[RMDB]
RNA sequence: GGGAACGACUCGAGUAGAGUCGAAAACUCUUUCACGGUUAUGUCUGUCUCUGGCAGAGCAGACUGUCAGGAGGACGAGGUCACCAUCUUCACGAAGCCAAAGCCAAAUUCCGCCUUGUCCUGUAAAACCUCAUUUAGGGUUCGCCCUAAAUGAGGUAAAAGAAACAACAACAACAAC
Reactivity to 2A3 in 0.01 (KOAc 150mM, MgCl2 10mM, bicine 150mM(pH8.5), 24C), signal-to-noise 6, nucleotides 027 to 126: c010u030c000u050u150u130c130a090c050g070g030u120u120a110u180g020u020c030u020g110u050c010u000c020u110g110g000c060a020g010a030g040c030a030g030a030c000u020g010u020c020a060g010g100a010g030g000a040c030g010a020g000g030u070c020a010c050c010a110u050c030u110u100c080a060c140g050a040a030g010c030c000a080a040a000g000c010c000a040a060a140u130u020c000c010g020c000c000u000u020g010u000c000c010u030g030u040a070a080a020
Reactivity to DMS in 0.01 (KOAc 150mM, MgCl2 10mM, bicine 150mM(pH8.5), 24C), signal-to-noise 4, nucleotides 027 to 126: c060u010c050u010u010u020c070a110c070g000g000u000u000a080u020g010u000c020u000g010u050c010u020c020u020g010g010c110a070g000a090g000c060a040g010a060c010u010g000u010c050a080g000g000a070g000g010a040c030g020a070g000g000u000c080a100c040c030a100u010c050u000u010c050a120c110g020a110a090g010c050c030a070a070a090g010c020c060a020a060a150u000u000c020c050g000c020c000u000u000g000u010c000c010u020g010u030a030a060a060